[RMDB]
RNA sequence: GGGAACGACUCGAGUAGAGUCGAAAAAUAAAGUAGUCUCCUGCAGCGUCUGAGGUUUCCGUUGCAGUCCUCGCAACCAGGACCUCGGCGUGGCCUAGCGAGUUAUGGCGACGAAGGCCGUGAAAAAUCCCACAUAAGGGUUCGCCCUUAUGUGGGAAAAAGAAACAACAACAACAAC
Reactivity to DMS in 0.01 (KOAc 150mM, MgCl2 10mM, bicine 150mM(pH8.5), 24C), signal-to-noise 1, nucleotides 027 to 126: a010u020a040a050a110g020u000a080g000u000c020u020c020c010u010g020c030a180g000c010g030u000c010u010g050a020g000g020u000u000u020c180c300g000u000u000g000c010a070g000u000c110c080u040c110g000c000a010a020c000c090a300g030g020a030c020c010u010c030g010g000c020g030u010g000g020c050c110u020a170g020c050g010a080g010u010u010a050u020g000g010c000g000a040c030g040a160a150g020g020c020c010g000u030g000a000a060a070a150a080